[RMDB]
RNA sequence: GGGAACGACUCGAGUAGAGUCGAAAAUCGUGAUCCGGAGGCUUUAAGCGGUGCCGAAUUAUCGAUCACACAGACAUGGUACUGACCUCUUCACAUUGCACUACAGCACUUACCGUUGACCAGGCUGAUAUACUCGCAUCUUCGGAUGCGAGUAUAUAAAAGAAACAACAACAACAAC
Reactivity to 2A3 in 0.01 (KOAc 150mM, MgCl2 10mM, bicine 150mM(pH8.5), 24C), signal-to-noise 6, nucleotides 027 to 126: u110c040g020u020g000a030u000c020c010g020g030a050g040g030c040u080u100u210a140a020g040c040g110g060u080g020c010c000g010a010a020u150u070a100u130c030g020a030u060c010a010c010a000c030a090g070a050c030a060u140g020g050u100a040c030u070g090a120c020c000u020c010u070u070c040a060c010a110u040u170g020c030a020c060u090a050c040a020g020c030a040c060u040u100a070c000c040g040u040u040g030a040c020c020a020g030g000c010u010g020
Reactivity to DMS in 0.01 (KOAc 150mM, MgCl2 10mM, bicine 150mM(pH8.5), 24C), signal-to-noise 3, nucleotides 027 to 126: u040c050g030u010g010a010u020c020c050g010g020a120g010g000c060u000u010u050a180a060g040c100g000g000u010g000c000c000g000a060a090u020u000a100u020c070g000a040u020c090a150c090a170c160a140g000a090c100a090u020g000g020u000a030c070u000g000a150c030c010u000c030u000u010c010a030c130a040u000u000g000c030a070c070u000a070c070a090g000c040a090c060u010u030a070c020c040g000u020u010g020a120c050c040a070g000g010c010u010g000
An RNA of 177 nucleotides, treated with 2A3 and DMS and read out base by base. The data come from the RNA Mapping Database (RMDB), library OK1LIB. The DMS profile rests on 4,977 reads. Conditions: 150 mM KOAc, 10 mM MgCl2 and 150 mM bicine (pH 8.5), 24 C. For 2A3 the reverse transcriptase was SuperScript II with manganese. Reactivities are given for positions 27 through 126.